[RMDB]
RNA sequence: GGGAACGACUCGAGUAGAGUCGAAAAGAAAAGAAGUUUAAUUGGCUCCUGGUUCCACAGGCUGCACAGGAAGCAUGAUUCUGGUAUCUUCUUGGCUUCUGGGGAGGCCUCAGAAAACUUACAAUCAUGGUGUAAGGCAAAAAGGAAUCUAGCCCUAUCGUGAUUUAGCAUUCGUGCUAAAUCACGAAAAAGAAACAACAACAACAAC
Reactivity to 2A3 in 0.01 (KOAc 150mM, MgCl2 10mM, bicine 150mM(pH8.5), 24C), signal-to-noise 1, nucleotides 027 to 156: g030a010a120a010a030g070a060a000g100u180u220u170a150a140u050u050g010g000c050u090c030c050u120g000g000u040u040c010c000a010c020a040g130g000c000u010g070c020a030c040a030g140g080a070a000g070c010a010u030g010a000u010u020c080u060g000g020u090a150u050c020u060u030c030u020u110g000g000c020u050u000c050u150g140g020g030g000a010g020g010c000c000u030c010a010g000a000a030a000a000c030u110u090a030c050a010a070u060c010a030u070g160g010u050g010u010a100a060g060g000c050a010a000a180a040a000g060g000a000a040u010c030u050a010g030c000c020c000u100a110
Notes
This 207-nucleotide RNA was probed chemically with 2A3. The reactions ran in a buffer of 150 mM KOAc, 10 mM MgCl2 and 150 mM bicine (pH 8.5), at 24 C.